[RMDB]
Conditions: 150 mM KOAc, 10 mM MgCl2 and 150 mM bicine (pH 8.5), 24 C. An RNA of 177 nucleotides, treated with 2A3 and read out base by base. For 2A3, 406 sequencing reads were counted. It was measured as part of the RMDB library OK1LIB.

RNA sequence: GGGAACGACUCGAGUAGAGUCGAAAACGUUGACCAAGUCAUAGACUGCGUCUUUUUUGACUAUCGUGCUGCCCUUAGGGAGUUUCUCCACAACCUCGCAUCGUGGUGCGAUAAGAGGGAAACAGUCGCGUGACAACGAUUUCGAUCGUUGUCACGCAAAAGAAACAACAACAACAAC
Reactivity to 2A3 in 0.01 (KOAc 150mM, MgCl2 10mM, bicine 150mM(pH8.5), 24C), signal-to-noise 1, nucleotides 027 to 126: c060g020u000u130g070a090c080c040a020a050g000u000c030a070u000a060g050a080c000u040g000c170g020u000c000u090u240u000u000u070u050g000a010c000u050a080u040c010g050u080g000c000u060g010c010c000c000u060u150a150g000g070g000a090g010u000u100u000c060u030c000c000a140c060a020a020c000c010u030c080g020c000a070u010c000g290u150g060g040u040g000c000g000a000u120a040a030g030a120g010g020g000a020a020a000c020a000g010u070c080
Description: For 2A3 the reverse transcriptase was SuperScript II with manganese. Values cover nucleotides 27 to 126.